[RMDB]
RNA sequence: GGGAACGACUCGAGUAGAGUCGAAAAUGUCGUGGUGUCGGCUUAGUCCCUUCCUGGUAAUGCGACCAGACGCAUGUCACGGCGACUUGUAUGGUUUUGCGUCAGGGGAAAGUGACUCAGGCACCAAGGCUAAUGCACUGUUCGCAGUGCAUUAGCCAAAAGAAACAACAACAACAAC
Reactivity to DMS in 0.01 (KOAc 150mM, MgCl2 10mM, bicine 150mM(pH8.5), 24C), signal-to-noise 2, nucleotides 027 to 126: u010g040u010c040g030u010g030g010u000g030u010c000g000g020c270u040u030a070g010u000c010c090c010u010u000c020c000u000g030g030u010a080a040u000g000c000g000a020c000c000a030g010a090c280g010c080a040u000g010u000c020a110c250g020g000c220g000a010c020u000u010g000u000a180u000g000g000u000u000u000u000g050c000g020u000c050a060g000g010g010g000a030a040a030g000u000g020a020c010u010c190a150g010g000c000a000c020c000a030a110
Reactivity to 2A3 in 0.01 (KOAc 150mM, MgCl2 10mM, bicine 150mM(pH8.5), 24C), signal-to-noise 3, nucleotides 027 to 126: u200g010u050c020g050u050g010g040u010g020u050c030g060g040c070u100u070a010g000u010c040c010c000u020u040c030c000u040g080g000u150a130a050u150g020c040g000a010c020c000a020g030a080c060g020c040a020u040g000u020c020a020c260g300g000c050g110a010c000u020u030g000u030a130u080g040g010u030u020u060u200g010c010g030u050c010a010g020g000g020g050a110a170a000g040u040g010a000c020u000c050a030g000g010c000a000c010c000a000a020